[RMDB]
Structure probing data (DMS and 2A3) for a 177-nucleotide construct. The RNA was probed in 150 mM KOAc, 10 mM MgCl2 and 150 mM bicine (pH 8.5) at 24 C. Values cover nucleotides 27 to 126. The data come from the RNA Mapping Database (RMDB), library OK1LIB.

RNA sequence: GGGAACGACUCGAGUAGAGUCGAAAAAGGAUAAGACUCAUCCACAAAAGAAGGCUGAAGCGGGAGAGGAAACAAAAUGCGAACCAGAUUGGGAACACCCUCUGUCUGCAAUCGUGAAGAUGACCUGAUCUAAGCCGGUUUUCGAACCGGCUUAGAUAAAAGAAACAACAACAACAAC
Reactivity to DMS in 0.01 (KOAc 150mM, MgCl2 10mM, bicine 150mM(pH8.5), 24C), signal-to-noise 2, nucleotides 027 to 126: a100g010g000a040u050a120a070g000a190c090u030c040a070u020c000c020a070c180a110a100a230a080g020a150a000g010g000c010u000g030a110a050g030c040g000g020g010a060g070a050g000g000a120a040a180c130a060a010a060a050u040g000c060g000a210a190c150c030a040g000a150u010u010g000g000g050a140a160c170a050c130c000c000u010c010u000g000u000c010u030g000c020a030a020u080c040g000u000g000a050a120g000a040u000g000a190c010c000u000g000
Reactivity to 2A3 in 0.01 (KOAc 150mM, MgCl2 10mM, bicine 150mM(pH8.5), 24C), signal-to-noise 2, nucleotides 027 to 126: a000g130g000a080u090a120a080g040a020c040u000c080a010u000c110c000a010c070a010a120a050a000g120a110a000g040g000c030u220g000a060a000g010c070g000g000g020a020g000a060g000g000a110a140a060c040a070a080a010a000u150g070c040g010a000a000c030c000a000g020a180u050u180g030g000g050a060a000c010a110c040c000c000u000c010u120g250u000c020u100g090c080a000a070u040c000g000u010g070a040a000g020a040u010g010a020c000c020u080g110